[RMDB]
RNA sequence: GGGAACGACUCGAGUAGAGUCGAAAACAUUUCGUUCGCGAAAUGAAAAAUCCUAAGUCGCUCGUGGAGAAUACACCGAAGAACUUGUCGGAAACGACAAGGGAGGGAGUAUUCGAUGAAACGAGCGAUAUGGAAAAAAGGACACUUCGGUGUCCAAGUGCUAUUGGCAAUUCGUUGCCAAUAGCACAAAAGAAACAACAACAACAAC
Reactivity to 2A3 in 0.01 (KOAc 150mM, MgCl2 10mM, bicine 150mM(pH8.5), 24C), signal-to-noise 1, nucleotides 027 to 156: c010a010u000u000u000c040g010u040u040c170g000c010g110a030a020a020u080g120a120a090a000a000a030u070c000c000u060a140a050g010u000c000g000c000u000c000g040u000g000g020a020g010a020a000u010a000c040a020c040c010g120a280a070g010a020a010c000u000u000g010u000c000g040g020a060a150a060c010g000a000c000a000a000g000g020g030a040g010g020g010a270g020u000a010u020u010c000g030a130u030g000a010a020a020c010g000a000g000c000g000a000u000a000u010g030g000a000a110a020a000a000a070g020g000a000c010a000c040u060u140c280g170g000u000g000u000c000c000a020a040
The record gives the reactivity of an RNA of 207 nucleotides to 2A3. It was measured as part of the RMDB library RNAMAK. Reactivities are given for positions 27 through 156. Conditions: 150 mM KOAc, 10 mM MgCl2 and 150 mM bicine (pH 8.5), 24 C. 2A3 adducts were read by reverse transcription with SuperScript II with manganese. The 2A3 profile rests on 998 reads.